[RMDB]
RNA sequence: GGGAACGACUCGAGUAGAGUCGAAAAUUACUUCAAUUCUGUUAAUUGCUCUAAAUCAAUUGAUAGAAAGUAAGAGUGGUAAAUUAAAAAUUGCCACCUAAGAAGAUAGAAUAAUUAAUUUACCUACCCGUAUUGUUGCCUUCGGGCAACAAUACGGAAAAGAAACAACAACAACAAC
Reactivity to 2A3 in 0.01 (KOAc 150mM, MgCl2 10mM, bicine 150mM(pH8.5), 24C), signal-to-noise 1, nucleotides 027 to 126: u050u010a000c000u000u040c000a020a250u040u010c000u000g040u060u000a000a000u000u020g000c010u000c120u300a090a020a050u100c000a000a000u000u000g000a000u000a000g060a020a000a050g220u120a100a000g050a100g060u010g010g000u000a040a040a040u000u080a120a000a000a020a020u000u050g000c000c000a000c000c000u000a080a140g040a020a000g010a040u130a000g010a020a000u120a080a000u220u130a070a060u120u110u070a100c000c000u110a120c000